[RMDB]
RNA sequence: GGGAACGACUCGAGUAGAGUCGAAAAUAGGUAAUAGAACAUUCUUUGACCUGCUGCAAAGAAUGCGGAUCUACCCUUGAGAAUGUUGAAGUUGAAGCUUAUGAGAGAAGACAGGUCUUUGACAUUCCGAUACUACAGACUUCGGUCUGUAGUAUCGAAAAGAAACAACAACAACAAC
Reactivity to 2A3 in 0.01 (KOAc 150mM, MgCl2 10mM, bicine 150mM(pH8.5), 24C), signal-to-noise 1, nucleotides 027 to 126: u150a000g020g000u060a030a050u070a220g080a060a030c000a000u000u000c010u000u000u060g060a130c040c080u090g070c110u070g050c020a000a000a020g010a020a020u000g000c030g000g020a010u050c010u030a080c010c000c090u040u160g130a080g010a090a030u020g010u010u000g000a000a000g030u060u100g020a110a000g060c010u100u050a110u240g180a130g030a010g040a120a000g060a020c020a030g070g140u000c000u030u000u000g000a000c020a000u000u000c010
Reactivity to DMS in 0.01 (KOAc 150mM, MgCl2 10mM, bicine 150mM(pH8.5), 24C), signal-to-noise 2, nucleotides 027 to 126: u000a030g020g000u010a060a120u000a090g010a090a130c000a010u000u000c000u010u000u000g000a090c050c050u000g010c130u010g010c000a000a010a020g000a010a000u000g010c090g000g000a050u000c070u000a050c040c000c060u010u010g000a170g010a010a030u020g010u000u000g010a000a070g020u000u000g010a170a120g010c040u000u000a080u010g020a190g010a110g010a030a030g000a070c030a070g000g010u020c010u000u000u010g010a010c030a040u000u000c010
Conditions: 150 mM KOAc, 10 mM MgCl2 and 150 mM bicine (pH 8.5), 24 C. Structure probing data (2A3 and DMS) for a 177-nucleotide construct. For DMS, 1,740 sequencing reads were counted. 2A3 adducts were read by reverse transcription with SuperScript II with manganese. DMS adducts were read by reverse transcription with MarathonRT.